RNA sequence: GGGAACGACUCGAGUAGAGUCGAAAACGGCUCCCGAGAGGGAUAAAACGGUAAAGAGCGUUGGAUCUCUGAGGGUAGAACCCCCAAGAAGAAAAAAAGAGAAAGCAAGAGACGGACGAUUUCCCCACGUUAAUAAUAACUUCGGUUAUUAUUAACGAAAAGAAACAACAACAACAAC
Reactivity to 2A3 in 0.01 (KOAc 150mM, MgCl2 10mM, bicine 150mM(pH8.5), 24C), signal-to-noise 1, nucleotides 027 to 126: c000g080g000c020u020c000c000c030g020a040g000a010g100g020g000a050u040a040a080a010a000c050g000g040u170a190a120a020g130a080g070c050g000u020u040g050g030a050u000c000u000c010u020g000a060g020g000g010u090a050g060a160a100c010c000c000c020c030a030a060g050a100a020g000a010a290a000a000a000a000a000g030a040g020a070a050a000g030c020a070a000g010a010g050a090c040g000g000a020c020g020a050u030u040u030c010c000c030c000a030
Reactivity to DMS in 0.01 (KOAc 150mM, MgCl2 10mM, bicine 150mM(pH8.5), 24C), signal-to-noise 3, nucleotides 027 to 126: c120g000g000c090u000c000c000c000g000a280g000a090g010g030g000a030u000a040a070a070a050c030g000g000u010a070a090a130g020a170g010c040g020u010u000g000g020a070u000c000u000c020u000g010a280g000g000g000u010a080g010a090a300c030c040c010c030c030a080a110g010a070a080g000a010a010a060a060a050a070a040g000a070g000a080a050a080g000c030a050a060g000a060g000a030c090g010g000a030c030g010a120u000u000u000c010c000c010c300a190